RNA sequence: GGGAACGACUCGAGUAGAGUCGAAAAUGUGCUCAAAAGGCUGUGAGACCUUGUGAAAGUAACCUAACUUCUCUGAGCCACUUUCCCCACUAGUAACAUACAGAUAAUAGUGUAGUUUCCAUUUCACAGGGUCAUUAUGGGGAUUAAAUAACAGCAAACCCAAAAUUUAUUUCGAUAAAUUUUGGGUAAAAGAAACAACAACAACAAC
Reactivity to DMS in 0.01 (KOAc 150mM, MgCl2 10mM, bicine 150mM(pH8.5), 24C), signal-to-noise 2, nucleotides 027 to 156: u000g010u010g020c000u000c030a030a130a090a150g030g010c000u020g000u000g000a200g000a020c020c000u000u000g020u000g000a020a070a070g000u000a100a120c080c020u000a080a040c010u000u010c060u000c040u000g020a050g000c020c010a050c050u010u000u000c000c000c040c030a130c070u000a090g000u000a080a100c090a140u000a280c080a130g020a160u000a090a130u010a080g020u050g030u000a110g010u000u000u000c040c010a170u000u000u000c010a040c050a040g010g030g050u000c010a080u000u010a050u000g020g010g020g010a150u010u000a040a040a140u020a090a060c020a030g010c060a100a160
Reactivity to 2A3 in 0.01 (KOAc 150mM, MgCl2 10mM, bicine 150mM(pH8.5), 24C), signal-to-noise 3, nucleotides 027 to 156: u100g010u030g000c000u000c020a040a080a060a010g130g000c000u010g020u010g030a100g000a030c010c000u000u010g000u000g000a030a030a010g070u100a050a040c020c030u040a040a110c070u110u110c050u030c020u070g000a000g050c040c020a000c000u020u030u020c010c020c010c000a020c020u060a020g070u100a140a010c040a090u210a040c030a060g150a050u110a200a070u090a150g050u030g020u040a030g030u030u060u020c070c060a090u010u010u010c010a010c000a000g010g010g010u010c010a010u060u100a050u080g010g010g000g000a000u040u040a150a080a090u090a080a010c010a010g000c000a040a030